[RMDB]
RNA sequence: GGGAACGACUCGAGUAGAGUCGAAAAGUGCCCCGUUACUGAGGGAGGGAAAAGCAGGGGAGCCAGUAGCAACAAAGGACUGGGAUCCUUGCUUUCAUGAGGUGAUGAAGUAAUGGCUACCUAUGGACUGGUUUUCAUAAUUCGUUAUGAAAACCAGAAAAGAAACAACAACAACAAC
Reactivity to 2A3 in 0.01 (KOAc 150mM, MgCl2 10mM, bicine 150mM(pH8.5), 24C), signal-to-noise 3, nucleotides 027 to 126: g100u080g060c010c000c000c020g070u080u080a060c040u060g040a070g040g030g010a080g010g000g000a030a100a000a040g000c020a010g000g000g020g000a030g140c010c020a010g020u050a030g060c050a030a140c030a130a300a030g090g020a000c010u030g030g000g090a020u030c000c000u000u000g000c000u040u020u000c040a070u090g060a020g000g050u120g030a070u040g050a060a030g020u080a060a100u080g040g000c020u050a090c010c010u050a130u090g050g020a030
Reactivity to DMS in 0.01 (KOAc 150mM, MgCl2 10mM, bicine 150mM(pH8.5), 24C), signal-to-noise 4, nucleotides 027 to 126: g010u000g010c050c030c020c050g010u000u000a060c080u000g000a150g000g000g020a110g020g000g000a090a050a040a030g020c010a040g000g000g010g000a070g010c000c000a010g010u000a070g010c080a110a160c300a090a130a170g000g000a020c010u010g000g020g010a090u000c000c010u000u000g020c000u000u000u000c080a060u010g000a080g000g010u000g020a090u010g000a110a040g010u010a050a050u010g000g010c040u000a070c040c040u000a070u010g010g000a300